[RMDB]
RNA sequence: GGGAACGACUCGAGUAGAGUCGAAAACCGUAGUAAUGUGAAUAUGUAACUCUUUUUGUGUGCUUUUCAUAGGUGCCUGAUGAUUAAUCUCUGUUUGUUGGGUGCGGCCCAUUAAAUAGUCCAAGGAAUCUAAGGCCGAAUUCGUUCGGCCUUAGAUAAAAGAAACAACAACAACAAC
Reactivity to 2A3 in 0.01 (KOAc 150mM, MgCl2 10mM, bicine 150mM(pH8.5), 24C), signal-to-noise 1, nucleotides 027 to 126: c010c000g000u010a020g040u050a010a300u140g040u060g140a060a000u260a070u250g080u050a130a090c050u120c000u070u130u070u020u230g170u040g000u090g000c000u150u120u000u000c010a050u070a020g020g030u020g050c000c000u010g040a040u090g020a020u050u120a060a060u110c010u000c000u150g000u050u060u120g000u050u000g000g000g000u000g010c000g060g000c020c020c000a000u010u010a000a000a090u100a090g020u010c000c000a060a060g100g000a020
Reactivity to DMS in 0.01 (KOAc 150mM, MgCl2 10mM, bicine 150mM(pH8.5), 24C), signal-to-noise 1, nucleotides 027 to 126: c000c000g040u050a150g000u010a060a080u050g000u000g020a080a040u010a070u000g000u010a060a100c020u000c020u010u010u030u010u020g000u020g020u040g010c010u000u020u000u000c040a040u000a070g030g050u000g030c010c000u010g020a080u040g000a010u040u000a120a080u010c060u000c060u010g030u010u000u000g000u020u010g000g000g020u000g000c020g020g000c000c010c000a100u000u000a020a020a070u000a070g000u030c000c030a050a090g000g000a120